[RMDB]
RNA sequence: GGGAACGACUCGAGUAGAGUCGAAAAACAUUAUCAUUCGUAUCUCAUUUGUGUCAUGAAUUAACUAUUGAAGGCGGAGCUGGGCAUGUACAGUUAAUGGAAUAUUAUGGGUGUCUUCGCCUAUCCAAAGGUUUCCAUUCAAUAACAAGUAUUAAAACUAUGACGUCCUAUUCGUAGGACGUCAUAGAAAAGAAACAACAACAACAAC
Reactivity to 2A3 in 0.01 (KOAc 150mM, MgCl2 10mM, bicine 150mM(pH8.5), 24C), signal-to-noise 2, nucleotides 027 to 156: a000c050a050u080u110a090u080c010a070u030u070c030g020u130a100u040c060u010c100a070u010u130u040g060u020g060u050c020a030u070g060a010a040u130u050a110a040c080u070a060u110u170g080a120a050g010g000c000g000g040a000g000c010u050g000g000g030c020a000u030g070u090a020c000a050g060u060u220a060a030u050g040g060a070a020u070a020u230u090a080u120g010g020g030u020g020u060c040u020u020c030g010c010c030u000a030u020c020c000a100a000a000g070g040u000u000u020c000c010a040u070u080c040a040a020u030a060a040c050a110a000g090u040a090u090u200a070a110a000a000
Reactivity to DMS in 0.01 (KOAc 150mM, MgCl2 10mM, bicine 150mM(pH8.5), 24C), signal-to-noise 1, nucleotides 027 to 156: a060c050a060u010u000a150u020c060a060u020u010c050g020u000a110u000c010u020c040a160u000u010u010g010u000g020u000c070a090u000g000a120a060u000u000a100a120c130u000a150u000u000g030a100a010g000g040c070g000g010a120g020c040u000g010g020g060c040a040u010g010u010a050c100a090g010u000u000a030a060u000g020g020a060a040u010a110u010u000a120u000g050g020g010u000g020u010c020u000u000c050g010c010c000u000a110u000c090c060a030a100a210g030g000u000u010u000c040c030a080u000u010c070a010a080u000a050a150c050a020a070g010u000a050u010u020a040a050a090a110
Conditions: 150 mM KOAc, 10 mM MgCl2 and 150 mM bicine (pH 8.5), 24 C. The record gives the reactivity of an RNA of 207 nucleotides to 2A3 and DMS.